[RMDB]
RNA sequence: GGGAACGACUCGAGUAGAGUCGAAAACUAUUUAUAGACAGAACAGUGGAAAACGUAUAUCGCUAUAAACCUUACACGCCGAGUCUUCCAGUCGUACAAUUCCACAUAGGCGAGGCAUAAGCGAAAGCGGGUAUGCAUACUUCGGUAUGCAUACCCGAAAAGAAACAACAACAACAAC
Reactivity to 2A3 in 0.01 (KOAc 150mM, MgCl2 10mM, bicine 150mM(pH8.5), 24C), signal-to-noise 3, nucleotides 027 to 126: c030u000a040u070u170u020a150u090a000g010a040c060a030g060a190a000c000a070g050u030g050g000a050a100a070a000c080g120u140a060u000a030u130c000g020c030u000a030u030a040a110a060c030c000u050u020a020c080a010c130g010c010c010g040a030g030u000c020u090u000c000c030a030g060u080c030g040u030a100c050a050a100u120u030c020c000a010c020a100u070a020g000g000c020g000a000g000g000c040a030u040a060a050g020c110g030a070a000a000g050
Reactivity to DMS in 0.01 (KOAc 150mM, MgCl2 10mM, bicine 150mM(pH8.5), 24C), signal-to-noise 2, nucleotides 027 to 126: c040u000a100u070u000u120a010u040a010g060a060c110a150g030a080a000c080a040g020u010g020g000a040a020a170a130c100g010u010a080u020a130u000c020g030c000u020a020u000a080a040a160c010c010u000u010a040c100a100c060g070c040c020g000a190g010u010c010u000u000c020c020a000g000u020c130g010u030a100c270a010a040u040u000c000c000a020c070a010u060a050g000g010c010g020a120g000g000c060a010u000a010a040g020c000g050a000a100a110g000
Structure probing data (2A3 and DMS) for a 177-nucleotide construct. Source: RMDB library OK1LIB, as collected in RNAgym. Values cover nucleotides 27 to 126. Conditions: 150 mM KOAc, 10 mM MgCl2 and 150 mM bicine (pH 8.5), 24 C. For 2A3 the reverse transcriptase was SuperScript II with manganese.